Background
The record gives the reactivity of an RNA of 207 nucleotides to DMS and 2A3. The RNA was probed in 150 mM KOAc, 10 mM MgCl2 and 150 mM bicine (pH 8.5) at 24 C. Values are in units of 0.01, from 0 to 300, in steps of 10.
RNA sequence: GGGAACGACUCGAGUAGAGUCGAAAAUUAGGGAAGGGAGACUCAGAGAGGUCAGUUAUUUUCCUGCAGCUGGAUAUCAGCAGGUGGAGUCACAUCCUGAAAUCUAUGUACCAGGUCCUGUGCAAGAUAUGUGGGAGACAUGGGAAUGUAUCCAGCAUAAUGGGAUAUAGUUCGCUAUAUCCCAUUAAAAAGAAACAACAACAACAAC
Reactivity to DMS in 0.01 (KOAc 150mM, MgCl2 10mM, bicine 150mM(pH8.5), 24C), signal-to-noise 2, nucleotides 027 to 156: u000u010a130g000g010g010a120a080g010g020g000a110g010a110c000u010c040a160g010a170g000a120g040g000u000c000a140g010u000u000a050u030u000u000u000c020c020u010g020c050a170g010c030u000g020g000a040u000a060u000c050a130g000c030a110g030g030u000g000g020a140g000u000c050a050c060a130u020c010c000u000g010a030a050a050u000c060u000a090u010g010u010a070c050c020a070g020g050u000c020c020u000g000u000g020c050a080a080g000a090u000a040u000g060u000g000g030g010a120g000a030c060a040u000g020g000g000a130a080u010g020u000a020u000c000c010a060g040c030a300
Reactivity to 2A3 in 0.01 (KOAc 150mM, MgCl2 10mM, bicine 150mM(pH8.5), 24C), signal-to-noise 2, nucleotides 027 to 156: u100u040a060g000g000g040a010a030g050g010g000a040g000a040c000u030c110a040g050a000g000a020g190g020u020c080a000g020u060u060a090u080u110u020u010c010c000u030g010c020a030g000c020u000g000g000a010u010a030u120c030a040g010c010a010g030g020u030g030g040a040g020u070c030a000c010a090u110c010c030u010g030a050a070a020u060c040u060a160u120g040u020a030c000c040a030g040g070u040c030c040u050g020u020g050c030a080a030g030a070u130a050u200g070u050g010g030g000a100g000a020c020a050u030g000g020g040a060a000u030g000u030a000u030c000c000a000g000c000a010